Source: RMDB library M2RFPK, as collected in RNAgym. An RNA of 207 nucleotides, treated with DMS and 2A3 and read out base by base. Values cover nucleotides 27 to 156. For DMS, 4,062 sequencing reads were counted.

RNA sequence: GGGAACGACUCGAGUAGAGUCGAAAAAUGGUAGUUAGUCUACUCGCUAUCCUAGUUACUUUGGAGUAAUCUAAAGUGUGUGUAAACGGGCGAAAGUCUGUAAAAUACUGGGGACAUAGGUUCAACAAGAACUAGUAGACCUUCGGGUCUACUAGAAGGGAAGAACUAGAUUCGUCUAGUUCUUCCCAAAAGAAACAACAACAACAAC
Reactivity to DMS in 0.01 (KOAc 150mM, MgCl2 10mM, bicine 150mM(pH8.5), 24C), signal-to-noise 2, nucleotides 027 to 156: a040u010g000g020u000a020g000u010u010a130g040u000c000u010a030c010u000c090g020c080u000a130u000c010c010u010a050g010u000u000a040c020u000u000u020g040g020a080g020u000a140a220u000c020u000a010a010a060g010u000g010u000g050u000g020u000a050a240a050c020g000g020g030c000g020a110a110a160g000u000c020u030g010u000a050a050a060a080u000a020c020u000g020g010g020g020a090c060a110u000a110g020g010u010u000c050a050a060c090a150a090g000a120a120c000u010a040g010u000a010g000a010c010c010u000u000c300g070g040g030u000c010u010a000c000u000a010g010a070a110
Reactivity to 2A3 in 0.01 (KOAc 150mM, MgCl2 10mM, bicine 150mM(pH8.5), 24C), signal-to-noise 2, nucleotides 027 to 156: a000u100g020g000u030a030g020u150u020a050g050u050c000u020a030c000u040c030g020c010u030a060u070c010c000u030a020g020u030u110a010c020u000u000u010g020g000a010g040u110a190a090u020c010u030a010a010a030g010u020g020u000g000u000g030u070a100a190a030c030g000g010g000c010g050a060a010a010g000u000c010u000g070u050a050a000a000a050u090a030c020u020g020g010g010g000a030c030a070u190a020g090g000u120u210c040a060a050c020a090a060g060a070a030c010u000a000g010u010a000g000a000c000c000u060u010c210g070g000g000u010c000u000a000c000u010a000g000a000a020